RNA sequence: GGGAACGACUCGAGUAGAGUCGAAAACGACAGAACUUCGGUUCUGUCGAAAUAAAAUCAGCGGUUAAAAAGCUGGCGUUAUAACCGCUGAACGCCAGCAUAAAAGAUUCGUGUUCGCACGAAUCAAGUAUCUGACUAAGUUCGCUUAGUCAGAUACAAAAGAAACAACAACAACAAC
Reactivity to DMS in 0.01 (KOAc 150mM, MgCl2 10mM, bicine 150mM(pH8.5), 24C), signal-to-noise 3, nucleotides 027 to 126: c020g000a020c000a010g000a010a010c000u000u020c200g020g020u000u010c000u000g000u000c010g010a020a060a060u000a070a060a060a090u000c030a010g020c010g000g000u020u000a030a080a080a090a110g000c030u000g010g010c020g010u000u010a090u010a070a120c020c020g000c020u000g000a010a020c010g000c010c000a040g010c050a120u010a040a050a090a060g000a000u000u000c000g020u000g000u000u010c230g010c010a000c000g000a010a000u000c000a040a080
Reactivity to 2A3 in 0.01 (KOAc 150mM, MgCl2 10mM, bicine 150mM(pH8.5), 24C), signal-to-noise 5, nucleotides 027 to 126: c000g000a000c000a000g010a010a000c010u080u130c240g070g000u010u000c000u000g000u000c000g010a000a000a000u060a000a060a000a060u070c030a010g000c010g080g080u130u160a090a090a030a040a050g010c010u010g020g000c010g000u000u070a140u050a210a040c030c020g000c020u030g020a000a000c000g000c010c000a000g000c010a030u130a050a160a010a050g000a000u000u010c000g000u010g040u050u080c250g040c060a000c000g000a000a000u010c000a000a000